[RMDB]
RNA sequence: GGGAACGACUCGAGUAGAGUCGAAAAAGCAACGAGUGUGUGUGGGACGUUUUAUCCCAAGCUCUGAGUAGAGCACGCGCUCACACACACCGCGAGCGAGCAUCAGCAGAGCGCAUACGCUGGUAAACACUACAAACAGCUUCGGCUGUUUGUAGUGAAAAGAAACAACAACAACAAC
Reactivity to 2A3 in 0.01 (KOAc 150mM, MgCl2 10mM, bicine 150mM(pH8.5), 24C), signal-to-noise 3, nucleotides 027 to 126: a000g050c050a050a020c020g020a100g080u000g000u000g000u010g010u000g000g030g040a040c010g020u020u030u130u250a130u060c000c040c000a020a010g000c000u000c010u080g300a220g140u300a010g190a010g000c020a000c020g050c010g020c000u000c000a010c010a000c000a000c000a010c000c000g060c010g000a020g010c030g020a020g030c020a040u070c010a030g040c010a010g040a020g100c070g000c060a010u060a120c060g000c030u020g020g000u010a030a060a020
Reactivity to DMS in 0.01 (KOAc 150mM, MgCl2 10mM, bicine 150mM(pH8.5), 24C), signal-to-noise 4, nucleotides 027 to 126: a100g000c030a150a030c020g000a220g030u000g020u000g010u000g030u000g000g000g010a080c010g020u000u010u010u010a120u010c020c010c040a100a100g010c000u000c000u010g000a200g030u010a040g010a010g020c000a080c100g000c070g010c000u000c000a000c000a000c010a030c000a020c000c010g000c030g000a160g000c020g010a100g010c110a030u000c020a010g000c020a080g010a080g020c070g010c080a060u000a080c070g020c010u000g000g010u000a080a070a150